Annotation
An RNA of 177 nucleotides, treated with 2A3 and DMS and read out base by base. DMS adducts were read by reverse transcription with MarathonRT. Conditions: 150 mM KOAc, 10 mM MgCl2 and 150 mM bicine (pH 8.5), 24 C. The 2A3 profile rests on 4,996 reads. Values cover nucleotides 27 to 126.
RNA sequence: GGGAACGACUCGAGUAGAGUCGAAAAGAUAUGGAGUAUGAUGCUCAACAGCUACUGUGUCGGAAACGACAUGUAGACAUGAGCGCAUACUCCUAAGUCAAAGAGUAGUUCGUUCGCGAACUACUCACCUUGCUCUCACGUUCGCGUGAGAGCAAGGAAAAGAAACAACAACAACAAC
Reactivity to 2A3 in 0.01 (KOAc 150mM, MgCl2 10mM, bicine 150mM(pH8.5), 24C), signal-to-noise 3, nucleotides 027 to 126: g010a000u010a020u040g010g010a020g010u020a010u050g140a160u220g050c020u000c110a300a160c130a240g020c010u000a020c040u130g020u030g010u100c000g030g000a010a000a000c010g010a000c000a000u060g010u000a010g040a050c100a300u300g000a000g000c010g000c010a000u000a000c000u000c000c000u000a000a000g000u000c030a150a100a050g030a000g000u000a000g010u000u010c020g000u070u100c300g040c020g200a000a000c000u010a000c000u000c000a000
Reactivity to DMS in 0.01 (KOAc 150mM, MgCl2 10mM, bicine 150mM(pH8.5), 24C), signal-to-noise 1, nucleotides 027 to 126: g010a000u010a030u010g000g000a020g020u000a020u000g010a030u010g030c000u000c000a190a050c210a210g010c000u000a000c000u010g030u000g000u000c000g060g000a010a000a070c000g000a010c000a020u000g000u000a010g000a000c040a250u000g000a010g020c010g000c000a000u000a000c000u000c000c010u000a010a060g000u000c040a080a140a140g010a010g000u000a000g000u010u000c000g030u010u000c300g040c010g010a000a000c000u000a000c010u010c000a020